Chemical mapping of a 177-nucleotide RNA with DMS and 2A3. DMS adducts were read by reverse transcription with MarathonRT.

RNA sequence: GGGAACGACUCGAGUAGAGUCGAAAAUAGAAUAUUCGGUCACCCUAUGGUAGAAGAAAGGGAGGCCAUGGAUGCUGUUCGGGAGAACAGUGAGGCCACUAAAAUAUUGAGCCUCAGGGCUCUGACAUCCAGUCACUAUAUUCGUAUAGUGACUGGAAAAAGAAACAACAACAACAAC
Reactivity to DMS in 0.01 (KOAc 150mM, MgCl2 10mM, bicine 150mM(pH8.5), 24C), signal-to-noise 3, nucleotides 027 to 126: u010a100g000a080a080u000a080u010u000c090g020g010u010c000a070c020c000c000u000a090u000g010g010u010a140g010a160a120g000a080a120a030g010g010g000a060g020g020c010c010a080u000g000g010a060u000g010c000u000g000u000u000c010g000g040g010a180g030a020a010c010a010g030u000g000a060g020g010c000c000a090c210u010a060a060a060a060u020a090u010u000g010a030g010c000c000u000c270a120g020g010g000c040u010c000u000g000a060c130a170
Reactivity to 2A3 in 0.01 (KOAc 150mM, MgCl2 10mM, bicine 150mM(pH8.5), 24C), signal-to-noise 2, nucleotides 027 to 126: u170a020g110a110a050u130a100u150u150c100g000g000u010c030a030c030c000c010u030a070u180g170g050u210a130g040a300a000g060a170a210a030g060g000g000a030g000g000c010c000a000u060g020g010a000u030g000c020u000g000u040u000c020g130g000g040a160g010a010a000c010a000g050u010g040a050g160g000c050c000a030c050u170a070a100a040a100u270a050u100u140g020a010g020c000c030u060c150a150g070g000g020c000u020c030u020g050a010c010a080